RNA sequence: GGGAACGACUCGAGUAGAGUCGAAAAGAACUCGGGAAGGCUGACGAGAUCAUCGAAAAGCGCCGCGCCGCCGCAGAGGCUCGGUAUUCGAAGGGGAAAAAGCAGACAUCAGAUGCAAAUGCAAUGCAUAUGCAAAGCAAAUGCAUUGAUACGGGCGUCACAACCAGAGAUUCGUCUCUGGUUGUGAAAAAGAAACAACAACAACAAC
Reactivity to 2A3 in 0.01 (KOAc 150mM, MgCl2 10mM, bicine 150mM(pH8.5), 24C), signal-to-noise 2, nucleotides 027 to 156: g040a050a010c020u020c040g010g020g020a050a000g060g000c050u050g020a050c010g020a010g020a130u070c010a060u050c030g070a070a020a010a040g090c070g010c000c000g020c020g000c010c010g090c000c040g080c070a030g020a050g130g000c020u000c050g000g000u050a090u060u090c090g030a050a010g010g010g000g000a010a040a030a070a010g010c050a030g040a090c020a070u030c020a010g010a190u010g000c010a000a020a000u000g010c000a000a030u020g000c040a060u100a080u300g010c010a000a030a000g000c000a000a000a030u000g000c000a000u000u020g000a010u030a080c050g030g020g020c020g020
Reactivity to DMS in 0.01 (KOAc 150mM, MgCl2 10mM, bicine 150mM(pH8.5), 24C), signal-to-noise 2, nucleotides 027 to 156: g040a140a040c020u000c020g020g000g020a140a070g000g030c080u010g030a060c050g030a140g000a200u020c030a170u000c020g020a090a030a100a110g020c160g030c050c010g050c210g000c010c030g040c030c140g050c290a170g020a150g010g030c020u000c010g030g090u000a060u000u030c030g000a090a090g040g010g020g000a000a070a140a080a080g000c040a060g000a090c030a040u000c020a160g020a070u000g030c000a010a090a300u000g000c000a030a300u000g000c000a290u000a090u000g010c030a000a000a300g000c010a060a030a260u000g010c000a030u000u010g010a110u010a030c060g030g000g010c060g030